[RMDB]
RNA sequence: GGGAACGACUCGAGUAGAGUCGAAAAGAUAUGGACACUCAUAAGAUCGGUUAGAAUAGCAUCGAUCUAGGUCUCGGAAACGAGACCUAGGGAGCUACUAACCGAUCUUAUGAGUGUCCUAAGUCUAGGUUUAUGUAAUCUUCGGAUUACAUAAACCAAAAGAAACAACAACAACAAC
Reactivity to DMS in 0.01 (KOAc 150mM, MgCl2 10mM, bicine 150mM(pH8.5), 24C), signal-to-noise 3, nucleotides 027 to 126: g000a040u000a300u010g000g000a030c010a000c000u000c000a020u000a010a020g000a000u000c000g010g000u000u000a000g020a120a150u020a000g020c000a300u000c210g000a110u010c000u000a000g000g000u000c010u010c000g020g000a140a100a250c010g010a040g000a010c000c000u000a000g020g000g000a030g000c000u000a040c000u000a000a000c000c000g000a010u000c010u000u000a000u000g010a020g010u000g000u000c000c000u010a010a080g010u000c000u010a110
Annotation:
The record gives the reactivity of an RNA of 177 nucleotides to DMS. For DMS, 2,691 sequencing reads were counted. The reactions ran in a buffer of 150 mM KOAc, 10 mM MgCl2 and 150 mM bicine (pH 8.5), at 24 C.